Chemical mapping of a 207-nucleotide RNA with DMS and 2A3.
RNA sequence: GGGAACGACUCGAGUAGAGUCGAAAAUGCACGUACUCUUUGGCUAUGCACUUCCAUUCUGGAAACACGGUGGUCUUUUCGUCCGGCAGGAUGGUGACGCUCCAGCCGCGGUUGUGUAGCGUGAUCACAUCGAUAGAGGUUGCUAUCUCGCCGCGCAUAAUAAGACCCUGUUCGCAGGGUCUUAUUAAAAAGAAACAACAACAACAAC
Reactivity to DMS in 0.01 (KOAc 150mM, MgCl2 10mM, bicine 150mM(pH8.5), 24C), signal-to-noise 2, nucleotides 027 to 156: u000g010c030a070c050g000u010a060c040u000c050u010u010u000g020g040c040u000a090u000g020c040a100c060u000u010c030c020a130u010u010c090u020g050g010a120a080a100c080a060c050g020g000u000g020g010u000c040u000u000u000u000c060g010u010c030c000g030g020c070a070g040g020a040u000g020g020u000g000a050c020g020c020u000c020c030a110g010c010c020g030c030g000g010u000u000g040u010g020u000a070g030c020g020u000g010a070u000c050a050c050a110u010c040g020a130u000a090g010a080g030g010u000u020g010c010u000a080u000c020u010c040g000c030c000g050c040g000c030a290
Reactivity to 2A3 in 0.01 (KOAc 150mM, MgCl2 10mM, bicine 150mM(pH8.5), 24C), signal-to-noise 3, nucleotides 027 to 156: u070g000c010a000c040g060u110a070c060u030c020u060u060u070g020g000c030u030a060u160g030c010a040c080u120u020c010c000a050u110u050c020u080g020g110a140a110a010c070a030c040g050g060u040g040g020u040c020u020u130u100u120c050g080u050c050c020g010g030c020a010g000g030a030u020g000g050u010g030a010c040g000c060u000c030c050a030g040c040c010g010c000g020g030u120u140g010u040g030u090a030g000c010g050u090g070a080u080c010a020c020a090u090c120g050a050u070a080g070a010g050g020u040u060g020c010u010a020u060c020u010c060g010c000c000g000c000g010c030a030

The reactions ran in a buffer of 150 mM KOAc, 10 mM MgCl2 and 150 mM bicine (pH 8.5), at 24 C.